RNA sequence: GGGAACGACUCGAGUAGAGUCGAAAAUUUACAACAAGGAGACACACUCAUGUGAGGUCGUAAGAAGCUACUCACGGGAAGGGCUUGCUGUGAGGUCCCUAGCAGCACUCAGGAAGCACUGCCUCAUUUUUACUGCUUUGCGGCGAAGGGUUCAGGCCGUUCUUGUUACAUUCGUGUAACAAGAACGAAAAGAAACAACAACAACAAC
Reactivity to DMS in 0.01 (KOAc 150mM, MgCl2 10mM, bicine 150mM(pH8.5), 24C), signal-to-noise 2, nucleotides 027 to 156: u000u010u000a110c050a070a100c030a070a090g020g010a160g000a090c020a080c020a070c050u010c070a110u000g030u000g010a070g030g000u010c030g020u010a080a080g010a070a100g000c010u000a090c040u000c030a090c030g010g010g020a090a100g020g030g000c040u000u000g010c000u000g010u000g020a150g010g000u000c010c010c010u020a260g000c040a040g020c020a060c090u000c050a140g000g010a140a080g030c050a030c050u000g010c010c020u000c030a050u000u010u020u000u010a070c040u010g000c000u010u000u010g030c000g040g050c020g020a060a090g000g020g020u010u010c030a080g010g030c100
Reactivity to 2A3 in 0.01 (KOAc 150mM, MgCl2 10mM, bicine 150mM(pH8.5), 24C), signal-to-noise 4, nucleotides 027 to 156: u080u060u050a070c020a040a010c010a020a040g110g010a030g060a020c020a010c020a010c060u090c110a110u210g040u030g070a040g000g040u060c020g010u040a060a020g050a060a000g050c030u070a030c010u050c040a010c020g040g000g020a060a040g050g020g000c060u060u060g000c000u030g030u000g020a030g030g080u020c000c000c000u000a010g000c000a000g000c000a010c010u050c000a010g060g050a040a020g010c030a020c060u060g020c010c010u100c050a100u030u010u030u070u160a060c020u020g070c000u070u070u130g050c020g000g000c020g020a060a040g040g000g010u030u080c050a020g060g000c030
The data come from the RNA Mapping Database (RMDB), library OK3TST. Chemical mapping of a 207-nucleotide RNA with DMS and 2A3. The reactions ran in a buffer of 150 mM KOAc, 10 mM MgCl2 and 150 mM bicine (pH 8.5), at 24 C.